[RMDB]
RNA sequence: GGGAACGACUCGAGUAGAGUCGAAAAGAUUCCUCGUUGUUGAGCGAGGUUUAAACAAAUCGACCACACAAACGUAGAGCCGACUACGGAUUUAUAAAUUAAAGCAUUAAGUGUGAUAAGGAGACAAAAAACGAUGUUGUGUUCGCACAACAUCGAACAUCCUACCAAACUUCGGUUUGGUAGGAUGAAAAGAAACAACAACAACAAC
Reactivity to DMS in 0.01 (KOAc 150mM, MgCl2 10mM, bicine 150mM(pH8.5), 24C), signal-to-noise 2, nucleotides 027 to 156: g000a270u000u000c000c000u000c010g020u000u000g030u040u000g020a210g040c030g000a060g000g010u000u000u000a040a090a080c070a100a130a040u020c020g000a010c020c000a050c030a200c000a170a090a130c030g030u000a090g010a170g000c050c120g000a150c000u000a010c060g010g000a150u010u000u000a020u000a080a060a140u000u000a040a040a120g030c040a150u000u000a090a120g080u000g050u000g000a060u010a070a100g000g000a150g010a070c070a000a060a020a120a150a170c110g010a000u000g000u000u000g040u000g000u040u020c300g040c030a060c000a000a010c010a000u010c020g010a050a150
Reactivity to 2A3 in 0.01 (KOAc 150mM, MgCl2 10mM, bicine 150mM(pH8.5), 24C), signal-to-noise 4, nucleotides 027 to 156: g070a100u210u120c000c000u000c010g000u000u010g000u000u010g000a000g010c010g000a000g010g000u030u120u040a030a020a010c030a010a010a010u000c010g010a020c000c000a020c010a000c010a040a200a030c010g000u000a000g010a010g050c020c100g060a030c010u010a000c000g000g010a000u040u300u080a160u130a060a050a030u130u160a060a030a000g020c020a020u050u180a120a030g000u010g000u020g010a010u040a050a040g160g020a090g020a030c100a060a130a020a030a030a020c030g000a000u000g000u000u000g010u000g020u060u090c160g030c070a000c000a000a000c000a000u000c000g000a010a000